[RMDB]
RNA sequence: GGGAACGACUCGAGUAGAGUCGAAAAGUCCGAUCGUUCGGCCGCACGAGGCGGAUCGGCACGGACGACCAUGGUCGCGGCCGCGUCCGCGGCACCGGCUUACGGCAGCAUCAACGCCGUUGCCGGGGUUGUUCGGGAAUUUCGAUUCCCGAACAACAAAAGAAACAACAACAACAAC
Reactivity to 2A3 in 0.01 (KOAc 150mM, MgCl2 10mM, bicine 150mM(pH8.5), 24C), signal-to-noise 7, nucleotides 027 to 126: g010u000c000c000g010a160u090c070g090u250u090c020g060g000c020c010g050c030a170c220g220a120g230g050c120g030g030a220u060c000g020g000c020a020c010g000g010a000c000g010a000c000c010a080u170g070g000u020c010g000c000g010g010c040c130g210c150g140u080c010c000g000c000g000g000c000a000c000c010g000g010c010u080u140a000c000g010g000c010a030g050c020a180u170c070a080a110c120g000c000c000g000u000u010g000c000c000g000g000g040
Reactivity to DMS in 0.01 (KOAc 150mM, MgCl2 10mM, bicine 150mM(pH8.5), 24C), signal-to-noise 2, nucleotides 027 to 126: g000u000c000c000g000a170u010c060g010u020u030c010g000g020c000c000g010c090a210c240g030a190g010g050c000g000g040a030u030c000g020g030c120a050c020g020g000a000c000g000a180c030c000a090u070g000g060u020c020g030c000g000g000c020c270g000c300g000u010c000c000g000c000g020g010c000a030c000c000g000g000c000u030u000a020c010g020g000c020a090g010c130a160u060c210a140a120c220g010c000c000g000u000u000g000c000c000g010g000g000

Overview:
This 177-nucleotide RNA was probed chemically with 2A3 and DMS. For 2A3, 5,172 sequencing reads were counted. For DMS, 2,784 sequencing reads were counted. Source: RMDB library OK1LIB, as collected in RNAgym. Values cover nucleotides 27 to 126. In probing experiments dimethyl sulfate is read out at A N1 and C N3, which are open when not base-paired.